[RMDB]
RNA sequence: GGGAACGACUCGAGUAGAGUCGAAAAUCACAUAAAGGAGCUUAGGCUAUCUUGGAAAGUUGCCCCCCAGCUUCUGAACUGGACCUUUCUAUGGGGUUGUAGAACCCCAGCCUGGGACCACGCCAACAGAUCCUACUGCAUUCGUGCAGUAGGAUCUAAAAGAAACAACAACAACAAC
Reactivity to DMS in 0.01 (KOAc 150mM, MgCl2 10mM, bicine 150mM(pH8.5), 24C), signal-to-noise 1, nucleotides 027 to 126: u050c050a140c120a120u030a090a130a050g010g000a050g020c010u000u010a050g020g000c050u000a070u010c120u000u000g000g010a070a050a100g000u010u010g000c050c020c080c120c050c070a050g000c000u000u010c080u000g030a070a140c170u000g000g000a150c110c000u010u000u000c030u020a060u010g000g000g000g040u000u000g000u020a060g020a000a000c010c000c000c000a020g010c150c000u010g000g020g000a060c010c010a040c100g020c120c120a070a070c180
Background
This 177-nucleotide RNA was probed chemically with DMS. The reactions ran in a buffer of 150 mM KOAc, 10 mM MgCl2 and 150 mM bicine (pH 8.5), at 24 C. The data come from the RNA Mapping Database (RMDB), library OK2TRN. For DMS the reverse transcriptase was MarathonRT.